[RMDB]
RNA sequence: GGGAACGACUCGAGUAGAGUCGAAAAUUGCCAGGGCGUCUUCGACAUUGUCACUUCGGAAGCAGGAGUGGAGCCGACGUCGGAGGAGGGCGAGCGCAUCGCGGCCAUCGUCGUGCAGCUUUAUCGCCAAGGAGUGAAAGAGCCAGACCGCCUGCGGACGUUAUAGGGUGUUCGCACCCUAUAACGUAAAAGAAACAACAACAACAAC
Reactivity to 2A3 in 0.01 (KOAc 150mM, MgCl2 10mM, bicine 150mM(pH8.5), 24C), signal-to-noise 2, nucleotides 027 to 156: u110u090g070c020c030a050g030g020g030c030g010u020c020u060u030c020g040a040c080a140u080u130g100u100c000a020c020u010u000c020g000g060a040a040g000c060a050g000g070a030g020u030g040g170a060g000c010c040g020a000c020g000u070c160g000g030a020g030g020a050g070g290g000c010g000a020g020c130g040c100a050u040c020g000c000g040g010c030c020a040u040c030g040u000c000g030u130g020c000a030g000c000u070u020u060a260u200c070g020c000c000a000a020g030g000a010g000u030g070a060a040a000g080a000g050c020c000a020g020a040c040c070g000c020c010u060g040c070g050g060
Reactivity to DMS in 0.01 (KOAc 150mM, MgCl2 10mM, bicine 150mM(pH8.5), 24C), signal-to-noise 1, nucleotides 027 to 156: u000u000g020c020c020a070g000g020g010c010g000u000c000u000u000c030g020a040c000a090u000u070g000u000c020a040c070u010u000c060g080g000a150a150g000c030a300g000g010a070g010u010g040g000a050g040c000c050g000a030c010g020u000c010g040g020a090g040g020a070g030g100g000c000g020a050g030c230g000c050a060u000c000g030c040g040g030c000c040a100u000c000g020u000c030g030u170g030c000a220g000c020u000u000u010a100u010c010g020c000c020a090a240g020g010a080g010u000g010a060a030a060g010a070g030c030c000a150g030a140c000c050g020c000c010u040g010c030g010g000
Source information: Structure probing data (2A3 and DMS) for a 207-nucleotide construct. The data come from the RNA Mapping Database (RMDB), library OK3TST. Conditions: 150 mM KOAc, 10 mM MgCl2 and 150 mM bicine (pH 8.5), 24 C.